[RMDB]
RNA sequence: GGGAACGACUCGAGUAGAGUCGAAAAGAUAUGGAUGUUCAUAGUGAGAGCUAUAAUCAGCUUCGGAAACGAAGCUGGUAGCUCCCUAUGAGACAUCCUAAGUCAAACAGGGACUUCGGUCCCUGAACGCUUAAUCUGACUUCGGUCAGAUUAAGCGAAAAGAAACAACAACAACAAC
Reactivity to DMS in 0.01 (KOAc 150mM, MgCl2 10mM, bicine 150mM(pH8.5), 24C), signal-to-noise 1, nucleotides 027 to 126: g000a040u000a300u010g000g040a030u000g010u010u000c000a020u000a000g020u020g010a210g060a010g000c020u000a080u000a300a120u000c000a020g010c000u000u010c000g040g000a070a020a250c000g030a000a020g040c000u000g000g000u030a000g000c000u000c000c000c000u000a030u010g000a060g000a020c000a000u000c000c000u000a030a100g010u000c110a120a090a300c000a000g020g030g010a000c000u000u040c270g020g010u000c000c000c000u000g000a040a120
Reactivity to 2A3 in 0.01 (KOAc 150mM, MgCl2 10mM, bicine 150mM(pH8.5), 24C), signal-to-noise 1, nucleotides 027 to 126: g090a000u190a060u240g020g030a010u000g010u070u060c000a010u010a020g110u150g240a300g000a030g140c000u080a030u170a300a300u210c000a030g000c000u000u020c000g000g040a050a120a040c020g000a010a010g000c000u000g000g000u010a000g010c010u000c000c020c000u000a020u020g000a020g020a040c000a020u000c010c000u010a070a010g070u000c070a050a110a100c000a000g000g000g010a010c000u000u180c300g140g010u000c000c000c000u010g000a020a000

Chemical mapping of a 177-nucleotide RNA with DMS and 2A3. The DMS profile rests on 776 reads. 2A3 adducts were read by reverse transcription with SuperScript II with manganese. The 2A3 profile rests on 1,514 reads. High DMS reactivity at an A or C suggests that its Watson-Crick edge is free.